[RMDB]
RNA sequence: GGGAACGACUCGAGUAGAGUCGAAAAAAAAAUAGCGAUUCUCGUUAUAGUUGAGUCCUUCGAGGAUUGCUAAGCAAAGAUGCAGAACUAUCAAUGAACGUCUUUGAGCACAUUUCUAUACAAAAAAGAUUAACAAAAGGUUCGCCUUUUGUUAAUCAAAAGAAACAACAACAACAAC
Reactivity to DMS in 0.01 (KOAc 150mM, MgCl2 10mM, bicine 150mM(pH8.5), 24C), signal-to-noise 1, nucleotides 027 to 126: a020a040a040a140a080u020a010g010c000g000a000u000u000c000u000c010g000u000u000a060u000a100g010u020u000g000a080g010u000c160c050u000u010c000g000a020g000g010a000u000u010g000c000u000a010a070g000c040a000a000a000g000a030u000g000c130a090g000a180a060c060u000a120u010c240a040a130u000g010a100a150c060g010u000c030u010u010u000g000a120g000c060a050c170a030u000u000u000c060u000a150u020a090c060a010a040a080a080a030a090
Reactivity to 2A3 in 0.01 (KOAc 150mM, MgCl2 10mM, bicine 150mM(pH8.5), 24C), signal-to-noise 1, nucleotides 027 to 126: a000a000a000a000a020u010a000g000c010g030a040u010u000c030u000c010g030u020u090a170u180a280g010u060u140g160a050g230u090c020c000u000u040c010g000a010g010g010a030u020u000g000c000u030a000a020g040c000a040a000a020g050a030u020g050c080a040g070a160a040c080u150a140u300c020a080a130u100g010a050a020c000g000u000c010u000u060u000g000a030g020c030a020c010a060u000u110u080c060u070a200u070a190c080a000a050a000a050a000a070

The record gives the reactivity of an RNA of 177 nucleotides to DMS and 2A3. Source: RMDB library M2PK90, as collected in RNAgym. Conditions: 150 mM KOAc, 10 mM MgCl2 and 150 mM bicine (pH 8.5), 24 C. For 2A3 the reverse transcriptase was SuperScript II with manganese. For DMS, 739 sequencing reads were counted. Values cover nucleotides 27 to 126.